Notes: The record gives the reactivity of an RNA of 170 nucleotides to DMS and 2A3. It was measured as part of the RMDB library 15KLIB. DMS (dimethyl sulfate) methylates the pairing face of unpaired adenines and cytosines. DMS adducts were read by reverse transcription with MarathonRT.
RNA sequence: GGGAACGACUCGAGUAGAGUCGAAAAGCUAUGCAAACUAUGUUGUUUGGUAUGAUUAAGAAGCUCGACAACGAUGUUCUUAAUGGUAUCAUUUCUAACGCUAGGAAUGGUUGUAUACCUCUUAGUGCACCCUAUUACUUCGGUAAUAGGAAAAGAAACAACAACAACAAC
Reactivity to DMS in 0.01 (KOAc 150mM, MgCl2 10mM, bicine 150mM(pH8.5), 24C), signal-to-noise 2, nucleotides 027 to 129: g030c010u000a040u050g060c150a090a050a160c130u000a040u060g060u000u000g000u000u000u020g000g000u030a050u000g000a040u000u000a060a000g040a050a020g040c050u010c030g040a130c300a110a050c020g040a000u040g040u020u030c010u000u000a000a000u030g000g030u040a000u020c030a110u050u000u020c020u040a060a130c040g040c000u020a000g050g020a040a090u080g000g000u000u000g030u000a120u000a090c040c030u070c040u040u020a000g050u040g020c030a110c220
Reactivity to 2A3 in 0.01 (KOAc 150mM, MgCl2 10mM, bicine 150mM(pH8.5), 24C), signal-to-noise 9, nucleotides 027 to 129: g020c030u110a040u290g130c110a080a070a070c040u080a090u210g000u020u010g010u020u040u020g000g010u010a020u080g180a000u140u010a010a000g040a040a040g130c020u000c040g080a080c030a240a070c060g020a060u240g070u030u000c030u020u040a040a000u020g030g010u030a010u040c000a020u020u100u020c060u070a080a030c030g000c010u020a000g040g060a110a160u260g050g020u050u110g190u110a060u060a090c010c000u000c020u020u030a000g010u010g030c040a080c000